[RMDB]
RNA sequence: GGGAACGACUCGAGUAGAGUCGAAAACGAAACGGAGGUCGCAAUGGUGCGAUCGGAUUUUCUCACCAAACGACGAAUCGAAUGCAAAGGCACCGCCCCCAGUAAAUCACUGCUGUUGGUGGUGAGAGUACGCAGUGAUGUUCGCAUCACUGCGUACAAAAGAAACAACAACAACAAC
Reactivity to 2A3 in 0.01 (KOAc 150mM, MgCl2 10mM, bicine 150mM(pH8.5), 24C), signal-to-noise 1, nucleotides 027 to 126: c040g050a050a030a010c070g080g000a120g040g090u000c020g000c000a080a140u170g170g000u050g060c020g000a000u000c030g000g050a030u060u070u010u020c030u010c000a030c040c000a090a030a060c020g070a000c050g050a130a050u090c020g020a050a050u100g070c070a100a020a160g160g020c000a020c020c010g000c010c010c010c000c000a000g000u050a010a100a060u080c030a030c060u020g000c010u000g020u080u060g000g000u040g020g000u020g000a000g000a010
Reactivity to DMS in 0.01 (KOAc 150mM, MgCl2 10mM, bicine 150mM(pH8.5), 24C), signal-to-noise 2, nucleotides 027 to 126: c080g000a090a090a180c040g000g000a140g020g010u000c010g070c010a100a130u000g010g030u000g000c090g000a020u000c080g040g020a100u010u010u010u000c010u000c050a050c020c010a010a270a040c040g000a030c010g030a120a040u000c020g000a100a170u000g020c090a050a120a170g000g000c020a040c020c070g000c020c010c050c100c010a050g000u000a040a080a110u010c130a110c160u000g000c000u000g010u000u000g030g040u000g000g010u000g010a030g000a170
This 177-nucleotide RNA was probed chemically with 2A3 and DMS. The RNA was probed in 150 mM KOAc, 10 mM MgCl2 and 150 mM bicine (pH 8.5) at 24 C. For 2A3, 981 sequencing reads were counted.